Chemical mapping of a 170-nucleotide RNA with 2A3 and DMS. 2A3 adducts were read by reverse transcription with SuperScript II with manganese. The data come from the RNA Mapping Database (RMDB), library 15KLIB. For DMS, 3,437 sequencing reads were counted.
[RMDB]
RNA sequence: GGGAACGACUCGAGUAGAGUCGAAAAAUGUCAGUUUCGUUGCUGAUGAUUCAGGUACUCCCGUUGUUGAGUAUCUGUCUAAAGAAGACCUACAUACAUUGUAUGUAGACCCUAAGUAUCAAGUCAUGGAGGGAUGACUUCGGUCAUCCCAAAAGAAACAACAACAACAAC
Reactivity to 2A3 in 0.01 (KOAc 150mM, MgCl2 10mM, bicine 150mM(pH8.5), 24C), signal-to-noise 3, nucleotides 027 to 129: a010u110g010u040c000a000g000u000u080u300c300g050u160u240g000c000u000g000a000u020g000a000u000u000c010a000g000g020u000a000c000u000c000c020c060g000u000u000g000u000u000g010a020g010u000a000u000c000u000g020u000c010u120a170a000a020g110a130a050g070a030c000c020u000a030c030a000u050a000c020a100u140u300g040u000a000u000g000u000a000g000a010c010c000c000u010a190a030g080u000a100u230c090a100a010g070u030c000a120u110g050g070a030
Reactivity to DMS in 0.01 (KOAc 150mM, MgCl2 10mM, bicine 150mM(pH8.5), 24C), signal-to-noise 1, nucleotides 027 to 129: a000u000g020u000c000a000g030u030u000u040c280g060u050u000g010c000u010g030a110u010g020a040u020u010c000a040g000g000u020a040c030u000c010c130c120g010u040u070g010u000u090g040a030g050u020a000u000c000u060g040u070c000u050a030a000a110g060a030a160g000a190c160c020u030a030c020a000u000a050c070a140u000u000g010u030a000u130g040u040a010g020a030c080c000c050u020a110a020g040u070a030u050c080a020a120g010u040c030a070u030g020g020a300